[RMDB]
RNA sequence: GGGAACGACUCGAGUAGAGUCGAAAAAAAACGUACCGCGCUUAUCCACGCCGUUGAGAACGAUGCUCGGGCGGCCCUUAUGAUGGCCUGCUGCAAGAACAUAGCCAUCAGCAUCGAGGCCAUGAGCGCUUUUGCCAGCUAGUGCCUUGGCGACGGCGCUGGCUUACUAGUUCGCUAGUAAGCCAGCAAAAGAAACAACAACAACAAC
Reactivity to DMS in 0.01 (KOAc 150mM, MgCl2 10mM, bicine 150mM(pH8.5), 24C), signal-to-noise 1, nucleotides 027 to 156: a000a010a010a020c070g040u000a130c070c010g000c050g050c050u000u000a030u000c000c040a080c030g060c030c030g020u000u000g000a100g040a060a040c020g000a120u000g000c000u000c020g000g000g010c070g020g020c030c000c010u000u020a060u000g010a060u000g020g030c020c000u000g040c000u010g040c090a140a080g020a030a060c050a020u000a040g000c030c000a110u010c000a050g060c040a070u010c040g010a080g020g010c030c010a100u000g000a090g030c000g030c020u000u000u000u000g030c030c000a050g010c040u000a100g030u000g010c020c020u010u020g010g030c040g020a080c030g020g010c020
Reactivity to 2A3 in 0.01 (KOAc 150mM, MgCl2 10mM, bicine 150mM(pH8.5), 24C), signal-to-noise 3, nucleotides 027 to 156: a000a000a000a000c060g010u050a080c030c000g020c010g030c040u140u090a050u150c040c010a040c080g010c010c010g030u050u060g060a070g020a150a030c050g000a020u030g020c010u020c060g000g020g010c010g030g020c000c010c020u090u120a190u150g090a060u070g010g010c020c040u070g010c020u060g020c090a080a060g080a180a040c100a090u080a040g030c020c000a050u060c020a050g000c010a040u110c020g040a040g010g060c000c010a010u040g040a030g050c010g000c000u030u040u080u060g060c030c000a030g010c020u090a010g020u010g030c000c000u000u020g000g000c010g020a010c020g020g010c050